[RMDB]
RNA sequence: GGGAACGACUCGAGUAGAGUCGAAAACGCCAGCUAACAAGCAGGCUUAAACCCGGAGGGAAGCAAUUCAGCACGGGGACCUGUCCGUGGGGAGGCGAAACGGAUGGCACAUCUUCUGGCUUUGGCACUAAGAUAGGUUGUUCGCAACCUAUCUUAGAAAAGAAACAACAACAACAAC
Reactivity to 2A3 in 0.01 (KOAc 150mM, MgCl2 10mM, bicine 150mM(pH8.5), 24C), signal-to-noise 9, nucleotides 027 to 126: c040g010c000c010a020g010c020u070a080a100c070a160a030g010c030a020g020g010c000u070u120a090a100a080c000c000c000g010g030a070g020g030g010a040a030g030c040a040a130u110u090c030a030g030c030a030c050g010g000g010g000a020c000c020u040g040u030c010c020g030u080g020g030g010g010a040g000g030c020g020a070a030a010c020g020g010a030u040g050g000c020a020c000a100u010c020u080u010c030u030g020g000c000u060u040u070g050g000c040a020
Reactivity to DMS in 0.01 (KOAc 150mM, MgCl2 10mM, bicine 150mM(pH8.5), 24C), signal-to-noise 8, nucleotides 027 to 126: c210g010c010c020a070g020c020u000a140a120c260a120a060g010c020a060g000g010c030u000u020a040a100a120c030c000c020g010g010a160g010g000g010a060a060g010c120a100a130u010u010c080a070g000c030a150c050g010g000g000g000a090c060c030u010g010u010c030c050g010u010g000g000g000g000a110g000g010c050g010a040a090a060c060g010g000a070u010g000g010c070a040c060a060u010c040u010u010c020u010g010g000c040u000u000u000g010g010c110a270
The record gives the reactivity of an RNA of 177 nucleotides to 2A3 and DMS. Source: RMDB libraries RFM100 and RFMREP, as collected in RNAgym. Values cover nucleotides 27 to 126. The reactions ran in a buffer of 150 mM KOAc, 10 mM MgCl2 and 150 mM bicine (pH 8.5), at 24 C. For 2A3 the reverse transcriptase was SuperScript II with manganese. For DMS the reverse transcriptase was MarathonRT.